RNA sequence: GGGAACGACUCGAGUAGAGUCGAAAAUAAGAGCAUGUACGAAUCACGAUAUGAGAGUUCCUGGUGAAUCCCGGGUACAAGCAAAGGUAUUAAUCUCCCACUGCGUUCCCUUGCAGUAGGGAUAUAACCACUCUUACUUCUUCGGAAGUAAGAGUGGAAAAGAAACAACAACAACAAC
Reactivity to 2A3 in 0.01 (KOAc 150mM, MgCl2 10mM, bicine 150mM(pH8.5), 24C), signal-to-noise 2, nucleotides 027 to 126: u190a010a030g070a000g030c040a030u040g010u060a020c030g060a090a100u140c050a010c080g080a100u040a070u290g100a120g010a000g050u030u030c000c000u030g080g020u040g060a070a020u070c000c000c050g050g020g000u030a030c020a040a030g070c060a110a080a020g130g020u140a150u110u120a100a110u020c020u010c030c000c000a010c010u010g000c010g000u050u020c000c000c000u000u060g000c010a010g010u080a180g000g000g000a000u000a000u010a020a000
Reactivity to DMS in 0.01 (KOAc 150mM, MgCl2 10mM, bicine 150mM(pH8.5), 24C), signal-to-noise 2, nucleotides 027 to 126: u020a050a050g010a110g010c030a060u000g000u010a020c010g000a110a120u010c080a040c080g010a130u010a140u000g010a090g020a170g000u000u000c000c030u000g000g000u000g000a090a100u010c070c070c020g000g000g010u020a020c050a000a000g040c070a050a090a050g010g010u000a060u000u000a100a030u000c120u000c020c020c000a040c010u000g000c000g000u010u000c020c040c010u000u000g010c010a010g010u000a090g010g000g010a000u010a030u000a060a130